An RNA of 177 nucleotides, treated with 2A3 and DMS and read out base by base. It was measured as part of the RMDB library OK2TRN. The RNA was probed in 150 mM KOAc, 10 mM MgCl2 and 150 mM bicine (pH 8.5) at 24 C.

RNA sequence: GGGAACGACUCGAGUAGAGUCGAAAAGUCAAGAGAUUGAAACCAUCCUGGCUAACACAGUGAAACCCGUCUCUACUAAAAAUACAAAAACUUAGCUGGGCGUGGUGGUGGGCACCUGUAGUCCCAGACCUUACGUGAGUUUCGACUCACGUAAGGUAAAAGAAACAACAACAACAAC
Reactivity to 2A3 in 0.01 (KOAc 150mM, MgCl2 10mM, bicine 150mM(pH8.5), 24C), signal-to-noise 1, nucleotides 027 to 126: g000u000c030a100a030g070a040g020a130u000u140g090a120a020a000c050c000a000u020c000c030u010g000g000c040u050a080a010c090a010c060a110g060u070g100a060a070a000c020c010c030g050u000c030u000c010u010a060c050u110a100a090a040a040a060u170a050c060a020a150a020a170a020c050u070u030a000g040c010u000g050g030g000c020g010u020g020g020u040g000g050u090g000g080g000c020a040c030c010u040g020u070a040g120u050c000c010c000a020g020
Reactivity to DMS in 0.01 (KOAc 150mM, MgCl2 10mM, bicine 150mM(pH8.5), 24C), signal-to-noise 2, nucleotides 027 to 126: g010u000c030a030a030g010a080g050a140u000u010g000a040a100a090c030c050a030u000c040c010u000g000g010c010u010a030a050c090a060c130a060g000u000g000a050a050a030c010c010c010g000u000c020u010c010u000a000c020u010a030a020a050a040a050u000a030c060a000a010a050a040a110c220u000u000a020g000c030u000g020g020g030c050g010u000g050g020u000g010g010u010g020g000g000c070a030c030c010u030g020u000a060g000u020c010c000c020a070g010